[RMDB]
RNA sequence: GGGAACGACUCGAGUAGAGUCGAAAAGGAAGAGAUUAUGCAAGAGUUCAACGCUUACAAGCAACGGGUCGUUCACGUGGAAGGAAAGGUGUUCGACACCGUCCCUACAUAUCUCAGGGGCCUGGACGACUUGAUGAGCGGUCUUGGUGCAGCGGGCUAAUAGUACUUUCUUCGGAAAGUACUAUUAAAAAGAAACAACAACAACAAC
Reactivity to 2A3 in 0.01 (KOAc 150mM, MgCl2 10mM, bicine 150mM(pH8.5), 24C), signal-to-noise 7, nucleotides 027 to 156: g050g020a050a030g030a000g010a040u090u100a050u270g040c030a030a040g010a010g060u070u130c070a110a040c050g010c020u080u110a050c060a120a060g020c030a070a020c030g000g010g020u010c010g040u040u040c020a020c080g040u060g030g050a080a080g030g040a120a080a060g020g010u020g020u070u190c090g050a040c030a060c040c000g030u050c000c000c000u050a060c040a060u210a100u080c130u040c080a030g000g020g020g010c020c030u040g030g030a040c030g020a050c020u050u060g060a140u050g010a070g030c020g000g040u020c020u040u060g030g000u030g020c020a010g030c030g020g000g000c000
Reactivity to DMS in 0.01 (KOAc 150mM, MgCl2 10mM, bicine 150mM(pH8.5), 24C), signal-to-noise 4, nucleotides 027 to 156: g010g000a080a070g010a110g010a090u000u010a070u010g020c040a060a080g000a110g020u000u000c050a080a090c050g010c030u000u000a140c070a080a140g030c050a090a140c030g010g030g020u000c010g020u000u000c010a050c060g030u000g000g010a110a070g020g000a030a050a040g010g060u000g010u000u010c150g010a110c000a030c010c000g000u010c000c000c000u000a050c030a090u000a110u000c050u010c050a120g000g030g020g020c030c020u020g020g000a140c040g010a090c010u010u000g000a110u010g010a050g020c040g000g000u000c050u000u000g020g030u010g020c060a100g030c070g010g020g030c110
The record gives the reactivity of an RNA of 207 nucleotides to 2A3 and DMS. The RNA was probed in 150 mM KOAc, 10 mM MgCl2 and 150 mM bicine (pH 8.5) at 24 C. Reactivities are given for positions 27 through 156. It was measured as part of the RMDB library OK3TST.